RNA sequence: GGGAACGACUCGAGUAGAGUCGAAAAGUUGAAAGGGAAGCGCUUGCAACCAGACUCGGUCGUGGGGGCUCAGCGGGCAUGCGUGCCCGUGUACUCCCCCAUGCUCCGGGCCAGCAUCAGUUCUGGCUAACUGUUGCAGUUUCGACUGCAACAGUUAAAAAGAAACAACAACAACAAC
Reactivity to 2A3 in 0.01 (KOAc 150mM, MgCl2 10mM, bicine 150mM(pH8.5), 24C), signal-to-noise 2, nucleotides 027 to 126: g080u050u090g060a150a020a050g060g020g040a080a060g050c080g020c140u170u140g010c090a050a050c040c000a060g040a180c030u010c020g010g010u000c010g000u010g010g000g000g010g000c000u000c090a000g000c000g000g000g010c010a030u030g040c130g150u020g000c000c000c000g000u010g000u000a000c050u010c000c000c000c010c000a000u010g010c040u000c010c000g000g010g020c020c000a040g040c020a070u120c070a040g060u070u010c010u010g020g000c000
Reactivity to DMS in 0.01 (KOAc 150mM, MgCl2 10mM, bicine 150mM(pH8.5), 24C), signal-to-noise 3, nucleotides 027 to 126: g000u000u010g000a070a050a060g020g000g010a200a150g010c090g040c100u030u010g020c040a040a180c030c110a180g040a110c020u010c000g010g000u020c000g060u000g010g000g000g000g010c300u020c250a180g010c000g000g000g050c000a030u020g020c150g020u000g010c010c000c000g020u000g000u000a140c280u010c000c000c000c000c000a010u000g000c110u000c010c020g000g000g010c030c020a070g000c040a100u040c180a100g010u000u000c010u000g000g010c210